This 207-nucleotide RNA was probed chemically with 2A3.
The reactions ran in a buffer of 150 mM KOAc, 10 mM MgCl2 and 150 mM bicine (pH 8.5), at 24 C.
The 2A3 profile rests on 530 reads.
For 2A3 the reverse transcriptase was SuperScript II with manganese.

RNA sequence: GGGAACGACUCGAGUAGAGUCGAAAAGCUCUGUAAUGGGAUGGGAUCCGAAGCCCCAUUAAGGGAUAAUACAGGCUCUCCCAUCCAACUCCUAUUCCAACACGUCCUCGUCGUACAGAGUGGUAACUAAGGUAUAGCUCCUUCGGGAGCUAUACAAGACCAAUUGGAUGUUCGCAUCCAAUUGGUCAAAAGAAACAACAACAACAAC
Reactivity to 2A3 in 0.01 (KOAc 150mM, MgCl2 10mM, bicine 150mM(pH8.5), 24C), signal-to-noise 1, nucleotides 027 to 156: g010c040u070c050u000g020u000a140a280u100g120g000g000a000u010g000g000g000a020u240c000c000g040a040a130g060c030c060c000c000a060u090u300a140a120g000g010g030a040u050a260a010u090a240c100a070g000g070c000u000c000u000c010c010c010a030u010c000c000a000a000c000u040c000c000u060a020u110u040c040c040a100a040c050a060c140g130u050c010c030u060c020g050u010c000g050u030a000c000a020g000a000g020u010g010g060u130a150a070c100u040a140a060g080g000u020a000u010a000g020c000u000c000c000u010u020c050g020g000g000a000g070c000u000a000u000a000c000a000a000